The record gives the reactivity of an RNA of 177 nucleotides to DMS and 2A3.

RNA sequence: GGGAACGACUCGAGUAGAGUCGAAAAGAUCCAUGUGAUCCCAUGCUCACCAUGGCACGAUCCGAUAUACGAUCGCUCUAGGCUAGGCUAGGUACGCAUGAUCGUACCGUACACUAGAUCGACAGUAGGUGAUCUUGUCCUUCGGGACAAGAUCACCAAAAGAAACAACAACAACAAC
Reactivity to DMS in 0.01 (KOAc 150mM, MgCl2 10mM, bicine 150mM(pH8.5), 24C), signal-to-noise 2, nucleotides 027 to 126: g050a090u000c010c020a060u010g000u000g030a070u000c000c010c100a080u010g000c110u000c240a120c240c030a000u000g010g010c280a120c190g000a070u000c010c060g030a240u030a140u000a050c100g000a070u000c000g030c060u000c020u000a020g000g020c180u000a050g000g020c050u000a050g000g000u010a000c000g000c140a120u000g020a080u000c030g000u000a020c000c000g000u010a040c050a070c010u000a010g000a010u010c040g010a030c150a130g000u000a050
Reactivity to 2A3 in 0.01 (KOAc 150mM, MgCl2 10mM, bicine 150mM(pH8.5), 24C), signal-to-noise 2, nucleotides 027 to 126: g050a060u050c020c020a050u070g090u080g070a050u050c050c000c030a030u060g000c060u010c050a120c040c000a080u140g030g000c040a010c080g020a030u030c020c020g040a010u000a030u000a260c070g070a060u010c000g000c000u000c000u000a030g020g070c090u050a100g000g000c030u080a070g040g000u020a000c020g000c090a180u300g030a200u200c000g000u000a010c000c010g000u030a030c010a000c000u010a000g010a000u000c010g010a020c030a010g110u090a070
Reactivities are rounded to 0.1 and cut off at 0 and 3. As a SHAPE reagent, 2A3 marks flexible, mostly unpaired nucleotides at the ribose 2'-OH.